[RMDB]
Annotation: An RNA of 177 nucleotides, treated with 2A3 and DMS and read out base by base. The 2A3 profile rests on 6,821 reads. For 2A3 the reverse transcriptase was SuperScript II with manganese. Conditions: 150 mM KOAc, 10 mM MgCl2 and 150 mM bicine (pH 8.5), 24 C.
RNA sequence: GGGAACGACUCGAGUAGAGUCGAAAAAAGAUAUGGAACCAAGGGAGAAGCACUGAUCCGAAGAACAUUCGUCGGAAACGACGAAUGGGAGGAUCAGGAUUUCAUCGAUCUUGGUUCCUAAGUCAAACUAUCUGUGUAACUUCGGUUACACAGAUAGAAAAGAAACAACAACAACAAC
Reactivity to 2A3 in 0.01 (KOAc 150mM, MgCl2 10mM, bicine 150mM(pH8.5), 24C), signal-to-noise 2, nucleotides 027 to 126: a000a000g040a030u080a040u090g000g000a000a010c000c000a020a000g010g020g000a110g020a070a040g080c120a010c140u010g000a010u000c010c010g180a300a080g030a060a000c010a000u000u000c000g010u020c010g000g040a040a050a030c020g000a010c000g000a010a000u010g000g040g000a030g010g000a000u010c000a000g000g000a000u010u150u130c110a140u200c060g030a020u030c020u000u000g000g010u010u010c000c000u000a000a000g010u000c000a030a000a100
Reactivity to DMS in 0.01 (KOAc 150mM, MgCl2 10mM, bicine 150mM(pH8.5), 24C), signal-to-noise 4, nucleotides 027 to 126: a100a100g010a040u000a300u010g010g010a010a010c010c000a010a060g000g000g010a300g020a040a050g010c300a120c000u000g000a010u000c000c000g030a130a180g020a110a200c010a020u000u000c000g010u000c000g000g000a060a040a120c010g010a020c000g000a010a000u000g000g000g010a110g000g010a010u000c000a000g000g000a090u010u000u000c130a180u000c090g010a240u010c000u030u000g010g010u000u000c000c000u000a010a050g000u010c030a110a070a170